[RMDB]
RNA sequence: GGGAACGACUCGAGUAGAGUCGAAAAAAUAAGAGUUUGGAUUAACCUAUAGGGAAUUAGCGAUCAAGAAUACAACCUAAGGACCUGGUUGACUUAAUAAUUCCAUAGGUUGGUGGAAGCUAGCGAACUAAUGGGCUAAUUUCGAUUAGCCCAUUAGAAAAGAAACAACAACAACAAC
Reactivity to DMS in 0.01 (KOAc 150mM, MgCl2 10mM, bicine 150mM(pH8.5), 24C), signal-to-noise 2, nucleotides 027 to 126: a070a090u020a090a110g020a050g020u010u010u000g010g000a060u000u010a050a030c020c000u000a030u010a160g000g010g010a060a010u010u000a010g030c170g000a060u000c120a030a050g020a110a140u000a100c060a040a050c020c050u010a050a130g020g000a130c150c100u020g000g010u010u010g000a120c070u000u000a070a080u000a010a030u000u000c010c010a050u000a010g000g010u000u000g020g030u000g020g000a030a070g010c020u000a050g010c110g000a070a160
Structure probing data (DMS) for a 177-nucleotide construct.
Values cover nucleotides 27 to 126.